[RMDB]
RNA sequence: GGGAACGACUCGAGUAGAGUCGAAAAUCCGACGAGCUGAACGCUUUCGAAGGAAAGCUUGACCAGCUAAUCUUCUGCAACGCCAUUACAAGGACUGCCCUUAGAGGCUCAUGGCGAUAGGUCACCCAAAACUAUUUGAGGUUCGCCUCAAAUAGAACCUUUGUAGCAGGUUCGCCUGCUACAAAGGAAAAGAAACAACAACAACAAC
Reactivity to 2A3 in 0.01 (KOAc 150mM, MgCl2 10mM, bicine 150mM(pH8.5), 24C), signal-to-noise 2, nucleotides 027 to 156: u000c000c000g050a070c050g050a040g000c030u080g050a140a010c060g020c000u060u070u050c010g070a080a040g120g000a090a060a010g000c000u090u110g040a080c030c010a040g010c010u030a130a170u040c080u160u060c070u120g120c070a110a010c030g060c000c030a050u000u100a040c070a170a000g070g110a170c050u100g000c010c000c000u050u150a140g020a120g120g010c020u020c030a020u020g000g010c010g010a080u140a080g060g010u040c020a050c020c010c000a010a040a030a100c020u000a000u000u000u000g000a010g000g070u060u040c150g080c020c000u010c000a000a000a000u000a000g010a000a050

This 207-nucleotide RNA was probed chemically with 2A3. For 2A3, 1,057 sequencing reads were counted. The data come from the RNA Mapping Database (RMDB), library M2RFPK.